[RMDB]
RNA sequence: GGGAACGACUCGAGUAGAGUCGAAAAGCGUUUGCUCAAGCAUUGCAGCCGUAGAACCCGCGACCUCGCCGUCAUUGUUUCGGUCAAACACCAUGACGGGAACCGGAACGCCUGCUUUAGAAAUCGCAUUCCAAUGCGCCUUGGUUGGACUCCAGCCCUUACGUACAGCCUUCGGGCUGUACGUAAGAAAAGAAACAACAACAACAAC
Reactivity to 2A3 in 0.01 (KOAc 150mM, MgCl2 10mM, bicine 150mM(pH8.5), 24C), signal-to-noise 1, nucleotides 027 to 156: g040c020g030u050u050u190g070c050u060c110a000a040g040c050a060u040u300g030c060a070g060c070c030g040u120a030g060a190a100c010c000c030g040c080g050a160c100c020u080c000g120c020c010g000u020c020a020u010u020g030u060u080u190c160g130g040u100c060a140a000a000c010a020c030c010a010u040g020a030c000g000g000g000a010a010c010c010g000g000a030a040c070g010c000c050u060g010c000u080u010u080a010g010a030a000a050u080c010g000c000a040u220u100c020c010a170a140u100g000c070g000c010c050u160u080g020g000u070u000g100g000a200c040u070c000c000a010g060c020c000
About this RNA:
An RNA of 207 nucleotides, treated with 2A3 and read out base by base. Values cover nucleotides 27 to 156. The 2A3 profile rests on 603 reads. The reactions ran in a buffer of 150 mM KOAc, 10 mM MgCl2 and 150 mM bicine (pH 8.5), at 24 C.